[RMDB]
RNA sequence: GGGAACGACUCGAGUAGAGUCGAAAAAUCCUGGUCUUCUACUAUGAUCUUCUCUCUUCACCCCGUCGAGUGUGACGAGGAGUGUUCUGAAGUAGAGGCUUCAGAUUUAGAAGAAGGUGAAUCAGAGCAACCUGCGGGUUCGCCCGCAGGAAAAGAAACAACAACAACAAC
Reactivity to 2A3 in 0.01 (KOAc 150mM, MgCl2 10mM, bicine 150mM(pH8.5), 24C), signal-to-noise 4, nucleotides 027 to 129: a000u030c000c010u010g030g020u000c000u090u030c000u020a110c000u000a030u150g030a020u020c000u070u010c020u030c000u000c010u060u020c010a000c000c010c000c000g070u050c030g030a150g170u150g070u220g100a020c010g010a090g080g000a050g020u070g050u120u030c020u020g000a030a000g000u090a010g030a000g080g020c010u020u000c000a000g000a000u020u060u110a020g000a020a000g000a010a010g000g040u060g080a020a020u040c020a030g010a000g080c020a010a080
Reactivity to DMS in 0.01 (KOAc 150mM, MgCl2 10mM, bicine 150mM(pH8.5), 24C), signal-to-noise 3, nucleotides 027 to 129: a000u030c010c020u050g010g000u010c030u010u010c000u010a070c060u020a060u010g040a040u000c030u030u000c020u020c010u030c060u000u010c030a110c010c020c020c040g010u040c040g030a140g080u110g080u040g020a010c140g020a100g040g000a160g000u060g000u050u020c080u040g020a030a020g000u000a070g020a050g020g030c060u050u010c080a060g060a110u000u050u020a000g020a000a000g040a100a060g020g030u020g020a130a110u050c130a120g030a000g030c130a060a040